[RMDB]
RNA sequence: GGGAACGACUCGAGUAGAGUCGAAAAGAUAUGGAACCUAAGCUUCAACAGCUUGUCCAUCGGAAACGAUGGCAAGACAUGAAGCCUAGGUUCCUAAGUCAAACUUUGGAAGUUCGCUUCCAAAGAAGUAGCUCUUUAAGUUCGCUUAAAGAGCUACAAAAGAAACAACAACAACAAC
Reactivity to DMS in 0.01 (KOAc 150mM, MgCl2 10mM, bicine 150mM(pH8.5), 24C), signal-to-noise 4, nucleotides 027 to 126: g000a010u000a120u010g000g000a000a010c000c000u000a010a050g020c000u000u000c000a120a090c300a180g000c000u000u000g000u030c010c000a000u000c000g000g000a040a030a080c000g010a000u000g000g000c000a000a000g010a010c090a300u020g000a000a000g020c000c030u000a000g000g010u000u000c000c000u010a000a050g000u000c010a180a120a250c010u000u000u000g000g010a010a010g020u000u010c230g010c000u000u000c000c000a000a000a030g000a090a120
Reactivity to 2A3 in 0.01 (KOAc 150mM, MgCl2 10mM, bicine 150mM(pH8.5), 24C), signal-to-noise 4, nucleotides 027 to 126: g010a000u020a020u060g000g000a010a010c000c000u010a020a010g020c000u020u040c110a300a180c070a200g030c000u020u000g090u130c010c010a010u000c000g000g010a020a010a010c010g000a000u010g000g000c010a000a010g020a010c040a300u300g010a010a000g000c000c000u000a000g000g000u010u000c000c000u000a000a000g000u000c000a010a030a110c000u020u010u020g010g010a000a000g010u100u190c280g110c140u000u000c010c000a010a000a000g000a050a030